[RMDB]
RNA sequence: GGGAACGACUCGAGUAGAGUCGAAAAGAACUUUGGCCGGCUCGGAAUAGAAUCAGGGGGUGCAAACUGCCCACUGGCAUAAAGGAUUAUAGCAAAUGCGUACCCUAUUGCAAUACAGCCCGGCCAACAUAGACUACUCUAUUCGUAGAGUAGUCAAGAACGCUGUAAUAUUCGUAUUACAGCGUUCAAAAGAAACAACAACAACAAC
Reactivity to DMS in 0.01 (KOAc 150mM, MgCl2 10mM, bicine 150mM(pH8.5), 24C), signal-to-noise 2, nucleotides 027 to 156: g020a100a100c110u000u010u000g000g020c010c000g040g000c040u000c020g020g000a120a140u010a150g000a120a130u000c030a020g010g000g030g050g000u000g020c130a060a090a100c210u010g010c010c000c030a100c070u010g000g010c040a070u000a080a090a110g000g000a160u000u000a090u010a140g030c070a070a100a110u000g010c030g020u000a070c010c000c000u010a180u000u000g030c020a080a070u000a080c040a050g000c080c010c010g020g000c000c020a040a020c070a110u000a160g000a020c010u000a000c000u000c000u000a070u000u000c260g010u000a020g000a050g040u000a000g000u000c010a020a030
Reactivity to 2A3 in 0.01 (KOAc 150mM, MgCl2 10mM, bicine 150mM(pH8.5), 24C), signal-to-noise 4, nucleotides 027 to 156: g030a050a010c020u040u010u030g000g000c000c000g020g000c050u070c080g070g060a080a080u140a130g090a060a090u130c020a060g000g000g000g020g010u040g000c020a100a100a130c080u100g000c000c030c000a040c060u060g050g020c030a040u100a070a160a030g020g040a050u150u150a110u280a150g010c030a090a130a150u180g000c010g030u060a060c000c000c000u010a050u030u120g080c030a050a050u050a140c020a020g020c020c030c010g010g000c020c000a000a000c000a010u060a010g000a000c000u000a000c000u010c000u000a040u040u070c110g050u060a000g000a000g000u000a000g000u010c000a000a000
Conditions: 150 mM KOAc, 10 mM MgCl2 and 150 mM bicine (pH 8.5), 24 C. Chemical mapping of a 207-nucleotide RNA with DMS and 2A3. The DMS profile rests on 2,881 reads. It was measured as part of the RMDB library M2RFPK. DMS adducts were read by reverse transcription with MarathonRT.